[RMDB]
RNA sequence: GGGAACGACUCGAGUAGAGUCGAAAAUUAUUUUUAGGGAAGGCAAUAACUUCUCGAAUAUUGUCUUUUCCAGCAAGCAACAUGACAAAACGGUCAAGACCAAUUGCCAAUCCACCAUGAGGAGGAACUGAUUAAUGGGAUUCGUCCCAUUAAUCAGAAAAGAAACAACAACAACAAC
Reactivity to DMS in 0.01 (KOAc 150mM, MgCl2 10mM, bicine 150mM(pH8.5), 24C), signal-to-noise 2, nucleotides 027 to 126: u010u010a050u040u050u010u010u060a190g010g020g000a010a010g000g020c010a010a080u010a030a050c090u050u010c020u000c040g000a070a160u010a010u000u000g000u000c010u000u000u010u030c040c040a110g000c120a090a060g000c090a010a060c180a080u010g020a150c070a060a050a080a100c230g020g000u010c040a060a100g000a090c050c040a050a110u030u000g030c100c040a050a070u010c020c010a040c060c040a100u050g000a140g040g000a080g000g000a010a250
Reactivity to 2A3 in 0.01 (KOAc 150mM, MgCl2 10mM, bicine 150mM(pH8.5), 24C), signal-to-noise 5, nucleotides 027 to 126: u060u010a110u040u150u050u120u260a060g040g010g010a010a000g000g020c020a010a010u040a130a120c050u110u070c040u030c080g000a050a070u040a020u020u010g020u020c000u030u050u020u100c020c040a010g030c010a040a050g010c020a010a080c020a130u080g040a020c050a060a090a070a050c100g050g040u050c040a030a020g030a050c010c000a030a130u030u080g030c010c000a050a020u010c010c000a040c020c030a100u160g050a030g070g000a020g020g020a050a080